[RMDB]
RNA sequence: GGGAACGACUCGAGUAGAGUCGAAAAGGUUGGCUCAUCCUGAGACCGGGGAGCUUCGACGAUCUCUUGUCUCUCCUGAAGGAGGAAGGAGCUCUCGAACGCUCUCCCGACCGCUCGGAUGGGCCGCGUGGAUGUGAGUUCGCUCACAUCAAAAGAAACAACAACAACAAC
Reactivity to 2A3 in 0.01 (KOAc 150mM, MgCl2 10mM, bicine 150mM(pH8.5), 24C), signal-to-noise 9, nucleotides 027 to 129: g180g020u220u180g020g000c000u000c000a000u010c020c100u210g000a010g010a030c030c000g000g000g000g000a000g000c000u000u000c010g010a040c150g000a020u010c000u000c000u040u070g300u130c050u030c000u030c140c030u180g240a300a150g010g000a010g010g000a010a010g010g000a000g000c010u000c000u000c000g000a010a010c100g000c000u000c070u100c000c000c000g020a030c010c050g060c010u000c000g000g010a000u000g000g000g000c000c000g000c000g010u050g090
Reactivity to DMS in 0.01 (KOAc 150mM, MgCl2 10mM, bicine 150mM(pH8.5), 24C), signal-to-noise 9, nucleotides 027 to 129: g040g020u060u050g020g010c000u010c000a020u000c000c030u080g000a000g000a070c210c020g000g000g000g000a000g010c010u000u000c010g020a030c230g000a030u000c000u020c000u030u030g090u060c030u030c000u030c050c000u060g070a240a170g020g020a010g010g020a090a020g000g010a000g000c060u010c020u000c020g010a020a030c170g040c000u000c010u030c010c010c000g040a050c100c160g020c010u010c020g000g000a010u030g010g000g010c000c000g000c030g000u010g040